[RMDB]
RNA sequence: GGGAACGACUCGAGUAGAGUCGAAAAGGGAGACGGGGAUCCCGGGCUUACCCACGGGAACUGCUGGGUUCCCCUGAUGUCCAGUCCCUCCCCGCUCCUGGAGAAGGGAGACUCGGGAACGCCUAGCGAUUACCAUAGAGUUCGCUCUAUGGUAAUCAAAAGAAACAACAACAACAAC
Reactivity to DMS in 0.01 (KOAc 150mM, MgCl2 10mM, bicine 150mM(pH8.5), 24C), signal-to-noise 5, nucleotides 027 to 126: g000g000g010a040g010a270c240g000g000g010g010a050u000c040c060c080g000g020g000c080u000u010a160c050c080c020a090c300g010g000g010a030a060c120u000g020c080u000g020g000g010u000u000c010c010c010c030u000g000a090u020g010u010c060c090a100g000u000c010c020c020u000c010c000c000c110g000c020u000c010c010u010g000g000a120g000a170a130g010g000g000a080g000a080c090u000c060g000g000g010a060a070c160g000c080c030u000a080g010c260
Reactivity to 2A3 in 0.01 (KOAc 150mM, MgCl2 10mM, bicine 150mM(pH8.5), 24C), signal-to-noise 4, nucleotides 027 to 126: g000g000g010a020g010a040c020g020g000g000g000a000u030c010c020c010g020g040g000c020u040u090a100c010c010c010a010c080g040g000g000a040a030c050u110g050c050u090g070g020g000u000u010c000c000c000c010u010g030a070u100g080u030c030c000a000g050u010c010c000c000u020c000c000c000c000g000c010u020c000c020u020g050g070a210g060a150a090g050g030g010a020g000a020c030u020c060g010g010g020a050a040c050g060c010c020u030a030g050c010
Chemical mapping of a 177-nucleotide RNA with DMS and 2A3. Conditions: 150 mM KOAc, 10 mM MgCl2 and 150 mM bicine (pH 8.5), 24 C. For DMS, 4,322 sequencing reads were counted. Values cover nucleotides 27 to 126. High DMS reactivity at an A or C suggests that its Watson-Crick edge is free.